[RMDB]
RNA sequence: GGGAACGACUCGAGUAGAGUCGAAAAGAUAUGGAUGGCUUUUGACGCUUGACCACCUACCCACCUCGGAAACGAGAGGGUGGAGCGAUAAGCCAUCCUAAGUCAAAGAUUUCGUUCGCGAAAUCAACCCUAGUCUCAUCUUCGGAUGAGACUAGGGAAAAGAAACAACAACAACAAC
Reactivity to 2A3 in 0.01 (KOAc 150mM, MgCl2 10mM, bicine 150mM(pH8.5), 24C), signal-to-noise 2, nucleotides 027 to 126: g030a030u180a060u170g000g020a000u010g020g030c030u010u080u060u300g290a140c040g050c010u130u140g180a170c000c030a020c020c020u110a170c100c030c010a050c040c030u000c000g010g040a080a110a070c040g000a010g000a030g020g010g000u020g000g000a060g010c000g070a090u030a070a000g020c000c000a010u000c000c010u000a050a000g040u000c050a130a030a150g000a030u000u030u000c040g020u040u090c300g000c010g080a020a020a000u010c010a040a220
Reactivity to DMS in 0.01 (KOAc 150mM, MgCl2 10mM, bicine 150mM(pH8.5), 24C), signal-to-noise 1, nucleotides 027 to 126: g010a060u000a300u000g000g000a010u000g000g010c000u000u000u000u000g000a100c030g020c000u000u000g000a200c070c060a050c000c010u000a140c060c080c070a300c220c030u010c020g010g000a110a080a180c000g000a020g000a120g000g000g020u000g000g020a060g010c000g000a170u000a000a000g010c000c000a030u000c010c000u010a000a040g010u020c060a110a100a140g000a010u000u000u010c000g000u000u000c180g000c020g010a000a020a000u000c000a110a190